[RMDB]
RNA sequence: GGGAACGACUCGAGUAGAGUCGAAAAAGCUUUGUUGCCACCGCCGCGCCCGCCGUCGCGGCGACGCCGAUCGACGGCACGCUGACGAAUGACGGCUUCUUUCCGGACAUCGAUCUGUCCGCCUUGCGCGAUGCGAUGCGCCUCGACGGCACCGUGAUAUAUCAAUAGUAUUCGUACUAUUGAUAUAAAAAGAAACAACAACAACAAC
Reactivity to 2A3 in 0.01 (KOAc 150mM, MgCl2 10mM, bicine 150mM(pH8.5), 24C), signal-to-noise 2, nucleotides 027 to 156: a000g090c120u130u100u080g050u050u050g050c050c030a050c030c020g000c000c000g020c010g000c000c080c060g020c000c000g020u010c010g030c020g020g020c000g010a050c050g000c010c010g120a280u110c000g110a140c000g000g000c000a010c030g000c030u040g020a100c050g100a200a120u180g040a030c030g000g000c000u100u070c070u080u180u030c030c000g040g010a040c010a050u130c120g190a130u080c160u060g020u030c020c010g000c000c030u130u180g050c080g000c040g080a080u110g050c020g060a080u110g130c010g000c000c010u000c000g050a080c010g000g000c010a030c070c030g050u070g110a040